Description
This 177-nucleotide RNA was probed chemically with 2A3 and DMS. For 2A3 the reverse transcriptase was SuperScript II with manganese. The 2A3 profile rests on 21,479 reads.
[RMDB]
RNA sequence: GGGAACGACUCGAGUAGAGUCGAAAAGGAGUCACUUGAGAACCCAACCUACAUUUACCACUCCGCAUUCAUUGAGUGUGGAAGUUGUGGUAAUGAUUCCUGGCUUACAGGGAAUGCUAUCCAAGGGGAAUUAAUUGUAGUUCGCUACAAUUAAUUCAAAAGAAACAACAACAACAAC
Reactivity to 2A3 in 0.01 (KOAc 150mM, MgCl2 10mM, bicine 150mM(pH8.5), 24C), signal-to-noise 9, nucleotides 027 to 126: g060g010a060g070u040c020a010c090u040u040g030a030g010a140a030c010c010c010a010a030c010c010u070a070c020a070u050u060u050a010c000c000a010c010u000c000c000g000c000a010u010u020c030a060u080u300g020a010g010u010g000u020g000g030a030a050g110u160u160g000u010g000g000u000a010a000u010g020a010u030u040c000c000u010g050g000c060u130u140a060c040a040g010g000g050a050a060u070g020c040u090a060u060c030c020a050a040g030g000g030
Reactivity to DMS in 0.01 (KOAc 150mM, MgCl2 10mM, bicine 150mM(pH8.5), 24C), signal-to-noise 9, nucleotides 027 to 126: g000g010a090g010u000c050a060c050u000u010g010a140g000a100a110c020c010c010a120a150c080c040u000a130c050a040u000u000u000a010c010c000a020c000u000c000c000g010c000a010u000u000c010a200u010u010g000a010g030u000g020u000g000g000a060a130g010u010u010g030u000g010g010u000a010a010u000g000a140u000u000c010c010u000g000g010c190u000u010a100c070a050g000g000g000a030a060u010g010c110u000a070u000c050c050a060a080g000g010g010